[RMDB]
RNA sequence: GGGAACGACUCGAGUAGAGUCGAAAACAGGAGUAAUUCCCGCCGAAACAGGGUUUUCACCCUUCCUUUCUUCGGGUGUCCUUCCUCGCGCCCGCAGGACCACCCCUCGCCCCCUUUGCGCUGUCGCUUCGGCUACUACCCGGUGGAAACAACUGAACAACCUAAAAUAGUUCGCUAUUUUAGGUUGAAAAGAAACAACAACAACAAC
Reactivity to 2A3 in 0.01 (KOAc 150mM, MgCl2 10mM, bicine 150mM(pH8.5), 24C), signal-to-noise 2, nucleotides 027 to 156: c060a020g020g020a020g070u070a050a060u070u030c010c000c000g000c010c040g110a060a060a060c300a140g050g010g000u130u080u270u300c150a060c000c000c000u040u060c010c010u030u070u020c030u050u060c020g000g000g000u000g020u040c000c000u000u080c000c000u000c010g040c060g020c030c000c030g000c040a020g030g030a010c040c000a010c000c030c010c000u000c030g130c000c000c000c030c000u040u080u010g020c020g010c020u050g000u080c030g010c020u060u000c030g020g050c010u060a100c010u030a020c120c000c030g010g030u030g020g000a060a190a000c000a040a030c070u040g010a040a000
Reactivity to DMS in 0.01 (KOAc 150mM, MgCl2 10mM, bicine 150mM(pH8.5), 24C), signal-to-noise 1, nucleotides 027 to 156: c110a050g000g000a070g020u010a100a140u000u010c000c010c020g060c070c040g010a060a030a060c130a040g030g000g000u030u040u000u020c150a110c020c000c030u020u020c040c010u010u000u000c010u000u010c010g030g020g000u020g010u000c060c000u000u010c010c000u010c070g040c090g010c010c030c010g050c100a130g000g010a100c070c030a110c030c020c040c030u000c020g010c000c010c030c000c040u020u000u000g020c060g030c030u000g040u000c050g020c080u000u020c010g020g000c000u000a070c020u000a070c020c020c020g010g030u000g000g010a170a030a110c030a060a280c020u000g030a120a290

This 207-nucleotide RNA was probed chemically with 2A3 and DMS. For 2A3 the reverse transcriptase was SuperScript II with manganese. For 2A3, 980 sequencing reads were counted. The RNA was probed in 150 mM KOAc, 10 mM MgCl2 and 150 mM bicine (pH 8.5) at 24 C. The DMS profile rests on 3,539 reads.